[RMDB]
An RNA of 177 nucleotides, treated with 2A3 and DMS and read out base by base. Conditions: 150 mM KOAc, 10 mM MgCl2 and 150 mM bicine (pH 8.5), 24 C. For 2A3, 1,090 sequencing reads were counted. DMS adducts were read by reverse transcription with MarathonRT. The data come from the RNA Mapping Database (RMDB), library OK2TST.
RNA sequence: GGGAACGACUCGAGUAGAGUCGAAAAGGCAUCUCUUGAUCCGUAAAUUCUUUUUGUGCACCUAACGCUGAAAUAUCGCCUUCUCGUGUAUACGCAGACGGAAUCAUUUUUUGUGCAACUUUGUUAACUAUCCGAGACUGUUCGCAGUCUCGGAUAGAAAAGAAACAACAACAACAAC
Reactivity to 2A3 in 0.01 (KOAc 150mM, MgCl2 10mM, bicine 150mM(pH8.5), 24C), signal-to-noise 1, nucleotides 027 to 126: g030g000c010a030u030c000u000c000u080u100g040a010u020c020c000g050u060a090a120a120u070u050c010u120u060u050u080u070g040u020g020c020a000c020c020u030a090a000c030g040c030u010g060a000a050a060u140a060u100c050g070c030c000u060u030c020u000c010g040u060g030u060a160u020a120c030g030c050a060g050a070c020g020g140a060a050u020c040a020u000u030u040u010u060u070g070u010g000c030a030a110c050u010u160u060g060u090u070a080a030
Reactivity to DMS in 0.01 (KOAc 150mM, MgCl2 10mM, bicine 150mM(pH8.5), 24C), signal-to-noise 2, nucleotides 027 to 126: g010g010c050a020u010c080u010c080u010u010g020a050u000c010c010g030u010a100a090a110u010u010c080u010u000u000u000u010g020u000g000c050a050c020c070u000a080a080c200g020c040u020g010a040a070a060u020a120u020c130g000c000c040u000u000c040u000c090g020u000g020u010a030u000a050c100g000c120a070g020a050c070g000g020a060a080u000c070a010u010u000u010u000u020u000g010u010g010c050a100a060c170u010u000u010g000u020u000a110a220